RNA sequence: GGGAACGACUCGAGUAGAGUCGAAAACAGCGAUAUGAUGGCAUACCAUCUUUCGGGACUGACUUUUACAGUGGAGAUGUUUUACCCUUAACUGAUCGCUCAAAAUACACCCCCUUCGGGGGGUGUAGGAGAAAUAACUGUUCGCAGUUAUUUCUCCAAAAGAAACAACAACAACAAC
Reactivity to DMS in 0.01 (KOAc 150mM, MgCl2 10mM, bicine 150mM(pH8.5), 24C), signal-to-noise 2, nucleotides 027 to 126: c070a090g040c000g010a020u000a020u000g010a030u000g010g010c220a070u010a060c240c000a040u000c010u000u000u020c100g030g020g020a100c030u000g000a130c140u000u020u010u020a120c080a020g010u000g010g020a020g010a060u000g010u010u010u030u000a130c090c030c060u000u010a080a100c180u000g010a050u010c050g000c030u010c160a080a050a100a270u000a010c000a000c050c000c000c000c010u000u020c270g060g030g020g000g000g010u000g010u000a000
Reactivity to 2A3 in 0.01 (KOAc 150mM, MgCl2 10mM, bicine 150mM(pH8.5), 24C), signal-to-noise 2, nucleotides 027 to 126: c020a010g030c010g000a030u030a020u190g070a020u080g010g060c040a050u040a280c000c000a000u030c010u030u070u090c030g040g000g110a020c010u030g050a050c020u080u180u110u280a100c050a020g020u030g100g030a040g030a050u030g040u040u070u030u170a130c020c000c000u040u070a120a050c060u110g050a050u050c030g000c040u050c090a090a140a010a020u040a000c000a000c000c020c010c000c010u020u050c090g020g010g010g000g010g000u000g000u010a000